[RMDB]
RNA sequence: GGGAACGACUCGAGUAGAGUCGAAAAGUCGAUUUAAUGUCUUCUGGCAUUCACUCUUUGAACAUUCGUUCCAUGAAUGUAACUUUUGAAGGCAGUGGAAUCUCUGUUUUGAAGAUACGCUGUUUAUGUAAACGAGAAAACAGAUAUAUGGACUGAAGAUGUGAGAUAGGUUCGCCUAUCUCACAUCAAAAGAAACAACAACAACAAC
Reactivity to 2A3 in 0.01 (KOAc 150mM, MgCl2 10mM, bicine 150mM(pH8.5), 24C), signal-to-noise 5, nucleotides 027 to 156: g070u030c030g020a050u020u020u220a120a060u050g010u000c020u070u000c050u130g040g000c010a030u000u040c020a050c050u090c040u110u160u240g080a070a020c040a110u170u120c090g030u060u000c030c000a040u040g010a020a010u040g020u100a110a110c050u080u170u130u130g040a000a000g030g000c000a000g010u070g070g040a120a030u020c030u000c010u030g140u100u120u160u100g080a090a010g010a010u030a010c030g010c050u020g090u070u160u100a050u100g110u080a000a110a110c060g030a020g080a100a060a020a000c000a010g050a010u040a010u010a020u160g040g030a020c030u070g030a020a030
Reactivity to DMS in 0.01 (KOAc 150mM, MgCl2 10mM, bicine 150mM(pH8.5), 24C), signal-to-noise 2, nucleotides 027 to 156: g040u000c060g010a040u000u000u000a100a140u000g000u000c010u000u000c030u000g010g000c010a130u000u000c020a050c000u030c050u000u000u000g020a040a070c090a260u000u000c120g010u010u000c010c300a180u020g000a040a030u000g000u010a050a100c100u000u000u000u010g010a060a080g020g000c010a050g000u010g090g020a100a040u000c030u000c010u010g030u000u000u000u000g030a090a080g030a100u000a070c060g040c050u000g010u000u000u000a100u010g010u000a030a080a090c050g020a180g000a020a020a010a040c020a010g010a060u000a070u000a090u000g020g030a110c060u000g010a120a140